Chemical mapping of a 177-nucleotide RNA with DMS and 2A3.
For DMS the reverse transcriptase was MarathonRT.
Conditions: 150 mM KOAc, 10 mM MgCl2 and 150 mM bicine (pH 8.5), 24 C.
Values cover nucleotides 27 to 126.
For DMS, 1,929 sequencing reads were counted.

[RMDB]
RNA sequence: GGGAACGACUCGAGUAGAGUCGAAAAAAAAAGGACCUACAGCCGAGCGAGUGACUGAAAACGGCAAAGUCACGAAGCAUCGUUAUACCUAAAUGGUCGAAGCGAAAUAAGAGUUGUUCCCAGUAAACUUAUACUCGAAGUUCGCUUCGAGUAUAAGAAAAGAAACAACAACAACAAC
Reactivity to DMS in 0.01 (KOAc 150mM, MgCl2 10mM, bicine 150mM(pH8.5), 24C), signal-to-noise 2, nucleotides 027 to 126: a030a050a040a090a090g030g010a020c000c000u000a040c040a170g000c140c030g010a100g000c010g000a270g020u000g000a010c010u000g000a070a040a090a090c140g000g030c060a030a110a000g010u010c000a010c000g000a110a150g000c000a090u000c020g000u000u000a170u000a020c020c030u000a010a040a060u010g020g010u000c050g000a110a120g000c020g010a070a110a070u000a060a150g010a010g010u000u000g000u000u000c000c000c010a100g010u000a040a030a100
Reactivity to 2A3 in 0.01 (KOAc 150mM, MgCl2 10mM, bicine 150mM(pH8.5), 24C), signal-to-noise 2, nucleotides 027 to 126: a000a000a000a000a000g120g000a050c030c000u040a020c030a030g040c050c050g050a010g030c030g000a050g050u000g010a000c000u040g050a130a040a100a080c090g100g020c030a140a050a000g020u010c000a000c030g030a080a000g010c010a100u010c000g030u070u040a080u060a050c020c050u120a210a110a090u240g020g000u020c030g010a060a000g020c010g050a000a100a040u170a130a020g000a000g020u000u000g000u000u000c010c000c000a000g010u030a000a010a000